[RMDB]
RNA sequence: GGGAACGACUCGAGUAGAGUCGAAAAUAGUGCUAAGGACUGGAGAAGCCAUGCCCUCCAGCCUCUGUGAAUGGGUCAUAUGUAACAUGAGCCUGGAGAAAUUAUUUGAAACCAAAGGCAAGCCUCUAAACCAGGCUGCUGCUUCAUGGCGCCGGUGCUACGGAAUGAUAUUCGUAUCAUUCCGUAGAAAAGAAACAACAACAACAAC
Reactivity to DMS in 0.01 (KOAc 150mM, MgCl2 10mM, bicine 150mM(pH8.5), 24C), signal-to-noise 3, nucleotides 027 to 156: u000a090g020u010g000c020u010a080a080g040g020a070c010u000g030g000a060g020a140a090g040c010c080a080u000g000c160c080c000u000c020c000a020g010c070c010u000c030u020g020u000g010a140a080u000g030g030g010u000c080a140u000a110u020g020u010a110a080c030a070u000g010a060g040c090c010u000g010g010a130g000a100a040a120u000u000a080u000u000u010g010a160a070a140c080c040a030a070a120g020g020c000a070a100g010c010c000u000c030u000a040a100a220c100c100a070g030g000c030u010g010c060u000g010c010u000u000c040a080u000g030g010c020g030c090c020g010g030u000g010
Reactivity to 2A3 in 0.01 (KOAc 150mM, MgCl2 10mM, bicine 150mM(pH8.5), 24C), signal-to-noise 4, nucleotides 027 to 156: u080a000g070u050g040c040u050a060a080g040g030a130c000u000g000g020a070g010a170a000g010c020c020a020u050g020c020c000c000u020c000c000a000g000c020c000u010c040u030g060u030g060a120a100u110g050g050g000u070c050a020u070a050u260g090u090a080a040c030a060u170g030a000g040c000c000u000g030g010a010g040a040a070a020u140u090a070u110u150u100g080a110a040a040c060c000a040a040a030g020g000c030a040a020g000c010c010u020c030u080a070a090a070c010c000a000g010g000c000u010g010c000u020g010c000u050u060c030a010u030g000g000c000g010c020c010g040g010u090g010